[RMDB]
The record gives the reactivity of an RNA of 177 nucleotides to 2A3 and DMS. Conditions: 150 mM KOAc, 10 mM MgCl2 and 150 mM bicine (pH 8.5), 24 C. Source: RMDB library OK2TRN, as collected in RNAgym. High 2A3 reactivity points to a flexible backbone, as in loops and unpaired stretches.
RNA sequence: GGGAACGACUCGAGUAGAGUCGAAAAACAUCGGAUCGCGCGCGCGUCGGCCGGUACUCGGAUCUGUGGCCGCACUGCUGCGCUGCAGUACAGGCGCACGUACCUGCGCUGUCGGAUCCAUAGAGUGCGUAGCAUGGCGUUUCGACGCCAUGCUACGAAAAGAAACAACAACAACAAC
Reactivity to 2A3 in 0.01 (KOAc 150mM, MgCl2 10mM, bicine 150mM(pH8.5), 24C), signal-to-noise 1, nucleotides 027 to 126: a000c030a040u130c100g000g000a030u000c000g000c000g010c010g000c010g030c020g090u010c020g000g010c000c010g060g000u050a070c050u090c100g110g050a160u010c050u100g150u110g130g000c060c030g000c090a060c070u190g040c020u060g000c020g000c020u010g000c010a010g020u120a030c020a010g070g080c010g010c040a040c110g050u040a060c000c040u020g000c010g010c020u040g090u080c010g120g010a010u000c000c000a000u050a010g180a020g040u090g010
Reactivity to DMS in 0.01 (KOAc 150mM, MgCl2 10mM, bicine 150mM(pH8.5), 24C), signal-to-noise 1, nucleotides 027 to 126: a090c090a130u030c150g000g010a010u000c000g040c060g060c000g000c070g020c010g000u000c040g000g010c020c020g020g010u010a060c160u010c090g000g000a080u000c090u010g030u000g010g000c000c030g000c210a030c050u030g030c030u010g000c020g020c000u000g020c030a030g020u020a080c060a130g000g000c000g010c030a010c150g010u000a090c110c040u000g000c020g000c010u000g000u000c110g010g000a030u020c010c000a200u000a080g000a070g010u040g010
DMS adducts were read by reverse transcription with MarathonRT.